Background
Structure probing data (DMS and 2A3) for a 177-nucleotide construct. The RNA was probed in 150 mM KOAc, 10 mM MgCl2 and 150 mM bicine (pH 8.5) at 24 C. It was measured as part of the RMDB library OK1LIB. DMS adducts were read by reverse transcription with MarathonRT. High 2A3 reactivity points to a flexible backbone, as in loops and unpaired stretches. The 2A3 profile rests on 1,148 reads.
RNA sequence: GGGAACGACUCGAGUAGAGUCGAAAAUUAUGAGCCAAAAAGAGGUACCUGGGAGUACCAAGGGAAAACUAUAAUGCCUGAAAAAUACGCAAAAGAGUUGAUUAGCCAUCUGCAUAAGUUAACACACGUACUUUUCCUGUUUCGACAGGAAAAGUACAAAAGAAACAACAACAACAAC
Reactivity to DMS in 0.01 (KOAc 150mM, MgCl2 10mM, bicine 150mM(pH8.5), 24C), signal-to-noise 2, nucleotides 027 to 126: u020u010a000u000g000a090g010c030c030a060a050a020a130a090g000a170g000g050u040a060c010c050u060g040g000g060a220g000u000a010c010c000a150a060g010g000g000a030a000a110a160c050u010a020u010a010a120u020g050c000c000u010g030a000a000a060a070a120u000a090c150g050c060a000a090a090a050g040a130g020u000u030g000a050u020u000a170g000c000c070a000u010c080u000g020c090a010u000a030a010g000u000u030a070a070c190a080c070a100c230
Reactivity to 2A3 in 0.01 (KOAc 150mM, MgCl2 10mM, bicine 150mM(pH8.5), 24C), signal-to-noise 2, nucleotides 027 to 126: u120u140a110u180g000a060g050c000c000a130a000a030a000a000g140a140g000g000u050a190c060c070u160g050g300g000a150g000u090a020c000c000a000a010g050g040g030a000a060a000a000c030u040a020u000a080a130u140g000c000c000u000g030a000a000a000a070a000u190a030c150g050c070a000a000a030a090g120a020g000u070u080g010a210u040u130a000g010c000c000a090u000c060u090g030c030a070u050a070a120g030u080u120a130a040c060a000c000a000c120